[RMDB]
RNA sequence: GGGAACGACUCGAGUAGAGUCGAAAAGCUGGGAAAACGGUUGCGACGUGGGAGCACUCGUCGCCGGAGAGGUUGCCGUGGUCGACUUGUUGUCGCCGCGGAGGCCGAUCACCAGGAUCACCACCAGACAAAUAUCGUGGUUCGCCACGAUAUUUGUAAAAGAAACAACAACAACAAC
Reactivity to 2A3 in 0.01 (KOAc 150mM, MgCl2 10mM, bicine 150mM(pH8.5), 24C), signal-to-noise 3, nucleotides 027 to 126: g080c000u020g010g010g040a020a070a010a050c020g020g000u050u070g010c010g000a050c120g040u030g030g080g100a190g240c030a020c020u000c010g000u000c010g000c000c000g020g010a020g000a010g010g030u020u030g050c010c000g000u000g000g010u300c070g010a020c020u170u300g220u300u180g000u160c000g000c010c000g030c000g010g000a010g010g000c010c000g000a020u010c040a010c020c010a000g020g010a060u100c040a040c130c020a040c020c000a060g040
Reactivity to DMS in 0.01 (KOAc 150mM, MgCl2 10mM, bicine 150mM(pH8.5), 24C), signal-to-noise 2, nucleotides 027 to 126: g020c010u000g000g010g000a060a080a140a300c060g000g000u000u000g010c010g000a030c210g020u020g010g010g030a160g000c020a040c020u000c000g020u000c120g020c000c010g000g000a030g000a200g010g010u000u020g010c010c000g030u000g000g000u020c030g000a030c010u010u020g030u000u020g020u000c010g010c010c010g010c010g000g000a030g000g000c000c000g010a150u010c030a110c020c000a030g000g030a080u000c150a170c060c050a150c130c110a150g010
This 177-nucleotide RNA was probed chemically with 2A3 and DMS. It was measured as part of the RMDB library OK2TRN. The reactions ran in a buffer of 150 mM KOAc, 10 mM MgCl2 and 150 mM bicine (pH 8.5), at 24 C. The DMS profile rests on 1,907 reads. The 2A3 profile rests on 2,475 reads.